[RMDB]
RNA sequence: GGGAACGACUCGAGUAGAGUCGAAAAGGGGUCAAAGUUGUCAGCUCAUGAGGGAGCUGUUGACGCUCUGAAGCCUCCACGGAGCGAAGGGCUCCCAUGGUGAGCUUGGAUUUACUUUGACGGAGGCACCCAAAACAUUGGCCUUCGGGCCAAUGAAGUAAUCUUAUGUCUUCGGACAUAAGAUUACAAAAGAAACAACAACAACAAC
Reactivity to 2A3 in 0.01 (KOAc 150mM, MgCl2 10mM, bicine 150mM(pH8.5), 24C), signal-to-noise 2, nucleotides 027 to 156: g040g000g060g000u000c010a010a000a000g020u020u040g010u040c020a010g010c000u000c000a020u050g080a120g030g000g000a000g020c020u070g200u110u080g070a060c020g010c000u030c010u010g050a160a070g030c020c040u050c000c020a020c030g020g000a010g000c020g040a040a040g090g010g000c000u010c000c000c050a060u180g050g000u020g000a000g000c000u010u070g010g000a010u000u070u190a020c000u030u020u010g000a000c010g000g020a010g000g020c040a070c010c020c000a020a040a000a020c000a010u000u000g000g000c020c000u020u060c280g030g000g000c000c000a000a000u010g000a010a010
Reactivity to DMS in 0.01 (KOAc 150mM, MgCl2 10mM, bicine 150mM(pH8.5), 24C), signal-to-noise 1, nucleotides 027 to 156: g010g000g050g010u000c000a040a030a060g020u000u010g000u030c000a100g010c030u000c000a060u160g000a300g020g030g000a040g060c000u010g020u010u000g010a270c060g000c000u000c010u000g010a060a100g010c020c060u000c020c040a300c000g000g000a050g020c020g000a210a210g000g010g000c000u000c010c000c020a070u020g000g020u000g000a040g030c020u000u030g010g010a110u000u000u010a000c000u000u010u010g010a000c030g030g040a000g020g020c060a120c020c050c020a030a100a150a180c010a000u000u000g000g010c000c000u000u000c300g070g020g010c020c000a000a000u000g000a050a210

The record gives the reactivity of an RNA of 207 nucleotides to 2A3 and DMS. The RNA was probed in 150 mM KOAc, 10 mM MgCl2 and 150 mM bicine (pH 8.5) at 24 C.